[RMDB]
RNA sequence: GGGAACGACUCGAGUAGAGUCGAAAAGAUAUGGACUACUAACCUCCAACAGCUCGGAAACGAGACAUGGAGUGUUAGGUAGUCCUAAGUCAAAAGCGAUAUCCCUAGUUCGCUAGGGAUAUCGCAAGUCAUCACUUAAGUUCGCUUAAGUGAUGACAAAAGAAACAACAACAACAAC
Reactivity to DMS in 0.01 (KOAc 150mM, MgCl2 10mM, bicine 150mM(pH8.5), 24C), signal-to-noise 5, nucleotides 027 to 126: g000a040u000a300u010g010g000a010c000u000a030c010u000a010a000c000c010u000c000c000a030a100c280a180g000c000u000c000g010g010a100a100a190c010g000a010g000a030c100a190u010g010g000a020g010u010g010u000u000a000g020g000u000a010g000u000c000c000u000a020a060g010u010c030a080a060a090a120g000c000g000a010u000a010u000c000c000c000u000a000g000u000u020c200g020c000u000a010g000g000g000a000u000a000u000c000g010c000a010a040
Reactivity to 2A3 in 0.01 (KOAc 150mM, MgCl2 10mM, bicine 150mM(pH8.5), 24C), signal-to-noise 5, nucleotides 027 to 126: g020a000u060a040u140g000g000a000c000u010a000c000u010a010a010c000c010u000c010c010a090a090c070a180g050c000u010c000g010g050a090a090a070c010g020a010g030a050c020a030u060g000g010a020g040u300g010u040u020a020g000g030u010a000g000u000c000c000u010a050a010g050u020c040a010a030a110a070g010c000g010a000u010a000u010c000c000c000u000a010g010u020u060c250g000c170u000a000g010g010g000a000u000a000u000c000g000c000a010a000
Conditions: 150 mM KOAc, 10 mM MgCl2 and 150 mM bicine (pH 8.5), 24 C. The record gives the reactivity of an RNA of 177 nucleotides to DMS and 2A3. Reactivities are given for positions 27 through 126. For 2A3, 19,848 sequencing reads were counted.